[RMDB]
RNA sequence: GGGAACGACUCGAGUAGAGUCGAAAACAAAGAAUGCACUCGGAGCCCCAACACACCUAAAGCCAUGCUUUGAAGGAUCUGCCAAGCUCACUUUUAAUCAUGAGAAAGAAAUUACCCACACGGAGUCCAAUGGCCCUUUGUUCGCAAAGGGCCAUUGAAAAGAAACAACAACAACAAC
Reactivity to 2A3 in 0.01 (KOAc 150mM, MgCl2 10mM, bicine 150mM(pH8.5), 24C), signal-to-noise 2, nucleotides 027 to 126: c060a020a020a050g110a090a060u120g010c020a040c050u010c020g030g010a010g030c000c000c000c010a030a000c020a000c000a000c000c050u110a080a010a050g040c020c030a080u060g030c000u000u070u120g060a040a000g080g000a010u000c010u050g020c010c010a030a100g030c030u000c010a060c000u020u020u000u220a060a110u080c010a000u050g070a020g040a110a130a020g080a000a170a040u130u040a050c000c010c000a020c000a000c060g020g040a010g020u050c050
Reactivity to DMS in 0.01 (KOAc 150mM, MgCl2 10mM, bicine 150mM(pH8.5), 24C), signal-to-noise 2, nucleotides 027 to 126: c110a030a050a140g020a130a100u000g000c070a040c060u000c000g010g000a100g000c050c000c020c020a060a070c200a080c120a090c050c080u040a080a080a020g050c060c020a110u020g020c060u000u020u030g040a100a090g010g000a090u000c010u000g010c060c060a030a110g000c140u000c020a070c080u000u000u000u000a000a050u030c060a110u000g010a050g030a030a080a130g000a090a060a070u010u050a180c010c000c000a110c090a100c120g000g000a060g000u000c040

Chemical mapping of a 177-nucleotide RNA with 2A3 and DMS. High DMS reactivity at an A or C suggests that its Watson-Crick edge is free. It was measured as part of the RMDB library RFM100. Conditions: 150 mM KOAc, 10 mM MgCl2 and 150 mM bicine (pH 8.5), 24 C. The DMS profile rests on 2,016 reads. For DMS the reverse transcriptase was MarathonRT. The 2A3 profile rests on 913 reads.